An RNA of 177 nucleotides, treated with DMS and 2A3 and read out base by base.
For DMS, 3,957 sequencing reads were counted.
The RNA was probed in 150 mM KOAc, 10 mM MgCl2 and 150 mM bicine (pH 8.5) at 24 C.

[RMDB]
RNA sequence: GGGAACGACUCGAGUAGAGUCGAAAAGAUAUGGAUAGGCAUGGAGGUCGGACCACUUAGAUUUUCAGUUCGGAAACGAACUGAAUAUAGAUGUGGUUCCGACCGUUGAAAUGCCUAUCCUAAGUCAUCCCAAAUAUGAGUUCGCUCAUAUUUGGGAAAAAGAAACAACAACAACAAC
Reactivity to DMS in 0.01 (KOAc 150mM, MgCl2 10mM, bicine 150mM(pH8.5), 24C), signal-to-noise 2, nucleotides 027 to 126: g000a040u000a300u000g010g000a010u000a010g000g000c000a010u000g000g000a070g000g000u000c010g000g010a040c010c000a010c000u000u000a080g010a070u000u000u000u000c000a000g030u010u000c000g000g000a150a070a270c000g010a010a010c010u000g010a000a010u000a030u000a030g000a050u000g010u000g000g000u010u000c000c000g030a010c010c010g010u010u010g000a110a130a020u000g000c000c000u000a000u000c000c000u000a010a060g010u000c030a210
Reactivity to 2A3 in 0.01 (KOAc 150mM, MgCl2 10mM, bicine 150mM(pH8.5), 24C), signal-to-noise 1, nucleotides 027 to 126: g020a030u040a030u170g010g000a000u010a010g010g000c020a010u030g000g090a020g050g010u010c020g020g010a000c000c000a000c000u140u210a060g020a200u040u080u020u020c000a010g010u020u000c000g000g030a050a050a070c010g000a000a010c000u020g010a000a010u030a010u000a010g300a120u080g010u030g050g000u220u240c010c010g000a000c000c010g000u020u000g000a000a000a000u020g000c030c000u000a000u000c000c000u000a000a000g000u000c030a060
DMS adducts were read by reverse transcription with MarathonRT. High DMS reactivity at an A or C suggests that its Watson-Crick edge is free.